[RMDB]
RNA sequence: GGGAACGACUCGAGUAGAGUCGAAAAGGGGUCACCCGAUGAGGCACGUGUCGCGACGAUCGUACACUGAAGCCUCCACGGUGUACGGGAGCGACCGUGCCGAGGGUGACGGAGGCACCCAAAGAUGUGAAUCCCCGUUCGCGGGGAUUCACAUCAAGGUAUGAGUGAGGUUCGCCUCACUCAUACCAAAAGAAACAACAACAACAAC
Reactivity to 2A3 in 0.01 (KOAc 150mM, MgCl2 10mM, bicine 150mM(pH8.5), 24C), signal-to-noise 1, nucleotides 027 to 156: g120g020g090g030u050c010a010c030c010c030g070a300u190g000a030g010g040c030a020c010g300u300g010u150c000g010c040g070a290c010g000a100u000c000g000u000a000c010a000c020u040g020a100a000g000c010c000u000c000c000a000c000g010g000u000g000u010a000c020g000g000g000a000g010c020g020a010c000c000g000u010g000c000c000g010a010g000g000g000u000g000a000c020g000g000a000g010g000c010a050c000c010c000a110a110a040g000a000u000g000u000g000a000a010u000c000c000c000c020g010u060u080c300g020c000g060g010g000g010a000u000u000c000a000c000a000u000c000a000a010